[RMDB]
RNA sequence: GGGAACGACUCGAGUAGAGUCGAAAAGCCGUAAACGCAUCCGGCGAAUAAGAUGCAUGAGCGAAAGCUCUAAGAUAAUUGGCCGUUUGGUAGGGGCCGUAGAGCCUACUUAUUAAUGCUCGAGAAGUGUGGAGCGAUCAUCACGCAAGACUAACAACGCAGGAUAUUAUUUCGAUAAUAUCCUGCGAAAAGAAACAACAACAACAAC
Reactivity to DMS in 0.01 (KOAc 150mM, MgCl2 10mM, bicine 150mM(pH8.5), 24C), signal-to-noise 1, nucleotides 027 to 156: g000c040c020g070u010a060a300a040c190g000c000a060u000c060c000g000g010c000g000a130a080u000a060a060g000a070u000g020c020a070u010g000a110g000c000g050a170a160a300g000c020u000c020u010a050a060g000a080u010a110a200u000u010g020g050c020c020g010u010u000u010g040g000u000a070g070g010g000g050c000c010g050u000a110g010a040g040c030c010u000a110c100u000u000a050u000u000a040a110u000g000c010u000c020g000a110g000a080a220g000u050g060u000g000g000a120g070c040g020a170u010c010a080u000c120a050c000g000c000a080a130g000a300c170u000a060a020c000a080a140
Reactivity to 2A3 in 0.01 (KOAc 150mM, MgCl2 10mM, bicine 150mM(pH8.5), 24C), signal-to-noise 1, nucleotides 027 to 156: g020c000c000g050u150a130a130a140c040g060c020a040u010c020c020g000g000c000g000a070a060u160a080a060g040a020u030g030c020a050u080g000a010g010c030g010a090a040a000g010c010u000c000u010a060a110g050a020u080a150a160u060u120g000g000c040c000g070u090u090u140g060g060u110a050g000g000g010g000c000c000g000u120a050g000a000g040c010c010u050a060c020u060u000a000u010u120a240a040u040g000c000u030c110g000a010g050a170a000g010u120g070u100g130g020a040g030c010g000a050u010c020a010u060c050a010c060g030c020a000a040g100a090c080u150a130a010c020a000a000